[RMDB]
RNA sequence: GGGAACGACUCGAGUAGAGUCGAAAAGAUAUGGAACGGUGUAGACAUGCUACAGGAUCGGAAACGAUCCUGAAUAGCAACAGCUACACAGCGUUCCUAAGUCAAAAGAGAUAGUUCGCUAUCUCAACGCGUAAAGAUUGUUCGCAAUCUUUACGCGAAAAGAAACAACAACAACAAC
Reactivity to 2A3 in 0.01 (KOAc 150mM, MgCl2 10mM, bicine 150mM(pH8.5), 24C), signal-to-noise 2, nucleotides 027 to 126: g000a000u020a000u040g030g010a000a000c020g010g000u000g000u000a030g010a020c200a300u300g000c020u010a000c000a000g000g020a020u000c010g000g010a010a010a010c010g020a000u000c000c010u000g000a040a090u060a000g010c060a040a060c090a100g040c000u000a000c000a000c010a010g150c060g000u010u000c010c000u000a020a000g040u030c020a070a060a140a130g010a000g010a020u000a000g020u090u100c300g000c220u020a010u020c010u000c000a000a050
Reactivity to DMS in 0.01 (KOAc 150mM, MgCl2 10mM, bicine 150mM(pH8.5), 24C), signal-to-noise 2, nucleotides 027 to 126: g020a030u000a150u000g000g000a010a000c030g030g020u010g000u000a000g000a040c100a300u010g040c000u000a030c000a000g000g000a010u000c000g020g000a030a000a090c000g010a030u010c000c000u000g000a080a130u000a020g010c000a110a090c270a060g010c020u000a000c000a000c000a210g000c060g010u000u000c000c000u000a010a060g000u000c000a040a130a050a240g000a010g000a000u000a000g000u000u000c200g050c000u010a000u000c000u000c000a040a150

Source: RMDB library TTRDES, as collected in RNAgym. The record gives the reactivity of an RNA of 177 nucleotides to 2A3 and DMS. The RNA was probed in 150 mM KOAc, 10 mM MgCl2 and 150 mM bicine (pH 8.5) at 24 C. Values cover nucleotides 27 to 126. The 2A3 profile rests on 3,414 reads.